[RMDB]
RNA sequence: GGGAACGACUCGAGUAGAGUCGAAAAGCCAGUCGCUGCUCCGUCCCGGAUGUCGCGAACAUCGCCGCGAGCAUUAUGAUUGCCGGCAGGAUCAACAGCAAAAGUCUAUUCACCGUCAUGGCCGAACACCAGGCUAAAUCUUCGGAUUUAGCCUGGUAAAAGAAACAACAACAACAAC
Reactivity to 2A3 in 0.01 (KOAc 150mM, MgCl2 10mM, bicine 150mM(pH8.5), 24C), signal-to-noise 5, nucleotides 027 to 126: g040c010c030a000g100u070c020g030c040u080g000c000u020c010c000g060u090c030c020c000g040g010a080u100g030u070c040g000c010g050a030a070c030a100u070c020g000c020c000g020c040g070a050g040c040a010u130u110a140u300g230a130u030u190g030c020c020g000g000c040a030g000g000a040u060c040a050a070c020a050g080c000a030a090a040a040g070u010c010u070a100u030u090c020a030c070c040g080u080c040a080u050g060g000c010c010g020a030a010c030
Reactivity to DMS in 0.01 (KOAc 150mM, MgCl2 10mM, bicine 150mM(pH8.5), 24C), signal-to-noise 2, nucleotides 027 to 126: g000c030c050a090g000u050c070g040c080u000g010c090u010c060c060g000u000c050c010c020g000g000a000u020g030u020c050g060c110g000a120a090c030a070u010c080g000c000c010g010c080g020a090g000c000a060u020u000a040u020g000a120u000u040g000c100c100g010g030c020a110g010g000a050u010c110a060a080c010a130g000c030a060a120a060a090g000u000c020u000a150u010u000c020a090c020c050g020u020c030a100u000g000g020c000c030g000a110a050c010

Chemical mapping of a 177-nucleotide RNA with 2A3 and DMS. Source: RMDB library OK1LIB, as collected in RNAgym. For 2A3 the reverse transcriptase was SuperScript II with manganese. The DMS profile rests on 2,524 reads.